[RMDB]
RNA sequence: GGGAACGACUCGAGUAGAGUCGAAAAGCGUGUUUCACAAAUGCUGCAACGCUGGCUGGAAAAAUAUCAUGCAGUGGCAGAACUACCUGAACCGCCCCGCUUUGUGGAAACGCAGACGGUAAAACAAAUAAUAGUGCAUGUUCGCAUGCACUAUUAUAAAAGAAACAACAACAACAAC
Reactivity to DMS in 0.01 (KOAc 150mM, MgCl2 10mM, bicine 150mM(pH8.5), 24C), signal-to-noise 4, nucleotides 027 to 126: g010c030g030u010g000u000u000u000c010a060c040a080a110a120u000g000c020u010g010c050a110a090c090g020c040u000g000g020c140u000g000g010a030a070a100a130a090u010a040u010c070a050u000g000c030a060g040u000g020g000c020a030g000a070a050c070u010a080c160c120u000g000a060a090c030c030g000c020c050c020c050g010c080u000u000u000g030u000g010g000a050a040a100c020g010c010a030g000a080c090g010g010u010a040a040a090a100c150a040a080
Structure probing data (DMS) for a 177-nucleotide construct. DMS adducts were read by reverse transcription with MarathonRT. The RNA was probed in 150 mM KOAc, 10 mM MgCl2 and 150 mM bicine (pH 8.5) at 24 C. Source: RMDB library OK2TRN, as collected in RNAgym.